[RMDB]
RNA sequence: GGGAACGACUCGAGUAGAGUCGAAAAGAGGGUUGUGCGGUACGAAUGUUUGAGAGCUGCUGUCAACGCCAUAAAUAAUAUGAAAUUUGAAAACACAGGACACAUCAUUAUGGACAUGAGGUACGCAAACCGUCUUGACGUUCGCGUCAAGACGGUUAAAAGAAACAACAACAACAAC
Reactivity to DMS in 0.01 (KOAc 150mM, MgCl2 10mM, bicine 150mM(pH8.5), 24C), signal-to-noise 1, nucleotides 027 to 126: g160a120g040g000g120u010u000g070u010g000c000g030g050u000a060c080g000a220a040u000g040u000u000u050g000a160g060a010g130c090u000g050c120u000g000u030c020a070a110c190g070c010c000a000u000a050a000a040u200a240a050u000a150u040g010a000a150a100u040u090u000g000a150a090a190a030c040a070c120a140g000g030a130c130a050c040a030u020c020a010u020u000a010u050g000g000a050c100a010u000g000a040g010g030u000a090c040g030c120a090
Reactivity to 2A3 in 0.01 (KOAc 150mM, MgCl2 10mM, bicine 150mM(pH8.5), 24C), signal-to-noise 1, nucleotides 027 to 126: g050a020g000g000g020u020u020g000u030g010c020g000g060u090a000c020g030a010a040u120g140u000u000u040g180a140g000a020g000c050u000g010c000u000g200u120c000a120a120c040g000c000c000a000u040a050a120a000u200a010a010u250a040u190g130a000a040a180u090u300u200g010a000a000a050a000c080a000c000a000g110g030a070c020a000c000a050u080c000a010u160u170a000u140g010g020a000c000a000u040g010a000g000g110u130a080c070g000c050a030

About this RNA
An RNA of 177 nucleotides, treated with DMS and 2A3 and read out base by base. It was measured as part of the RMDB library OK1LIB. Values cover nucleotides 27 to 126. For 2A3, 497 sequencing reads were counted.